[RMDB]
Background
Chemical mapping of a 177-nucleotide RNA with DMS and 2A3.
RNA sequence: GGGAACGACUCGAGUAGAGUCGAAAACCUUGCCGAUGGCGGCGAUGCGGCCGUUCUUGAGCGCGAGGUCGGCCUUGACGAUGCCCCAGUGGUCGAGGAUCAGGGCAUUGGUGAUGACGGUGUCGGCGUAAAACAGAAACUUCGGUUUCUGUUUUACAAAAGAAACAACAACAACAAC
Reactivity to DMS in 0.01 (KOAc 150mM, MgCl2 10mM, bicine 150mM(pH8.5), 24C), signal-to-noise 4, nucleotides 027 to 126: c010c010u000u010g010c010c010g000a070u010g000g010c020g010g020c020g010a100u000g010c180g020g020c000c000g010u000u000c020u000u000g010a190g020c210g010c070g000a020g020g010u010c010g000g000c010c020u000u000g010a090c040g010a030u000g000c000c000c000c300a140g040u010g000g010u000c020g010a150g020g000a040u000c040a160g000g000g010c020a020u000u000g010g020u000g010a100u010g010a080c030g010g000u000g010u000c010g000g000c070
Reactivity to 2A3 in 0.01 (KOAc 150mM, MgCl2 10mM, bicine 150mM(pH8.5), 24C), signal-to-noise 2, nucleotides 027 to 126: c000c000u010u080g020c000c020g040a050u030g040g140c000g000g000c020g010a050u190g030c070g010g000c000c000g030u030u070c030u040u120g050a170g120c160g010c070g080a000g070g020u020c030g000g010c000c000u000u110g070a030c010g000a000u010g000c000c000c000c000a110g130u110g110g040u020c050g160a150g120g040a010u030c010a000g030g030g000c000a010u010u020g030g040u060g040a080u090g010a020c030g130g250u000g000u020c000g000g010c020

The data come from the RNA Mapping Database (RMDB), library RFMREP. DMS (dimethyl sulfate) methylates the pairing face of unpaired adenines and cytosines.